Background: Chemical mapping of a 177-nucleotide RNA with DMS and 2A3. For 2A3 the reverse transcriptase was SuperScript II with manganese. The RNA was probed in 150 mM KOAc, 10 mM MgCl2 and 150 mM bicine (pH 8.5) at 24 C.
RNA sequence: GGGAACGACUCGAGUAGAGUCGAAAAGCCGCGUGAGGGAUGAAGGCCUUCGGGUUGUAAACCUCUUUCAGCAGGGACGAAGCGUGAGUGACGGUACCUGCAGAAGAAGCACCGGCAAACUACGUGCAAUUAAUAUGAAAUUCGUUUCAUAUUAAUUAAAAGAAACAACAACAACAAC
Reactivity to DMS in 0.01 (KOAc 150mM, MgCl2 10mM, bicine 150mM(pH8.5), 24C), signal-to-noise 7, nucleotides 027 to 126: g000c010c000g010c160g010u000g000a050g000g000g000a020u050g020a300a300g000g000c000c000u000u020c120g010g000g010u000u000g010u010a020a300a300c010c000u000c040u000u000u000c020a070g020c000a000g000g000g000a300c150g000a090a300g000c020g000u060g000a270g000u000g000a300c000g010g000u050a290c000c000u000g000c020a070g010a030a030g000a080a110g000c090a040c040c000g010g000c020a060a070a040c060u010a060c100g000u010g000c110
Reactivity to 2A3 in 0.01 (KOAc 150mM, MgCl2 10mM, bicine 150mM(pH8.5), 24C), signal-to-noise 4, nucleotides 027 to 126: g000c000c000g010c040g030u030g020a010g010g030g010a020u270g020a110a000g000g000c000c000u020u010c130g110g000g000u020u030g000u010a000a000a000c000c000u000c000u000u030u020c010a010g000c000a000g000g000g020a010c000g000a030a020g020c000g040u160g120a160g030u040g000a050c000g000g030u230a030c000c000u000g000c000a010g010a030a000g010a030a010g020c020a010c020c000g000g000c000a030a030a010c030u100a040c040g080u060g050c000